[RMDB]
RNA sequence: GGGAACGACUCGAGUAGAGUCGAAAAGACGCCUGUGUGGCGAAUCGAGCAAUGGCAUAAGCCGCAAUAGAAGAUGAGAUGGAAGCGGCAAGAUAGAAUGCUCGCAACUAGAUCCAUCUCACAGAGACAUAAUUAGUGAGUUCGCUCACUAAUUAUGAAAAGAAACAACAACAACAAC
Reactivity to DMS in 0.01 (KOAc 150mM, MgCl2 10mM, bicine 150mM(pH8.5), 24C), signal-to-noise 8, nucleotides 027 to 126: g010a200c070g020c000c000u000g040u040g040u040g010g000c010g010a120a090u020c030g000a070g010c040a080a070u040g010g000c080a090u010a070a140g000c000c000g030c050a160a110u040a120g000a120a100g000a160u010g000a010g000a010u000g000g000a030a100g000c010g010g010c010a020a080g010a170u020a100g010a120a090u000g000c010u020c020g010c180a090a090c140u030a100g000a190u010c000c000a000u000c000u010c000a020c070a120g000a180g020a220
Reactivity to 2A3 in 0.01 (KOAc 150mM, MgCl2 10mM, bicine 150mM(pH8.5), 24C), signal-to-noise 9, nucleotides 027 to 126: g070a010c030g050c020c010u190g100u120g120u220g180g000c030g010a020a080u100c030g000a010g030c030a050a200u260g120g000c050a080u070a140a030g010c000c000g000c020a030a090u100a110g130a140a020g110a230u050g000a010g000a000u000g010g020a100a050g000c000g000g000c010a010a000g040a020u150a040g140a140a060u050g000c040u060c070g000c020a030a070c030u050a040g010a200u000c000c000a000u000c000u010c000a000c000a000g120a000g010a010

Annotation:
Structure probing data (DMS and 2A3) for a 177-nucleotide construct. The RNA was probed in 150 mM KOAc, 10 mM MgCl2 and 150 mM bicine (pH 8.5) at 24 C. Reactivities are given for positions 27 through 126. Reactivities are rounded to 0.1 and cut off at 0 and 3. It was measured as part of the RMDB library OK1LIB.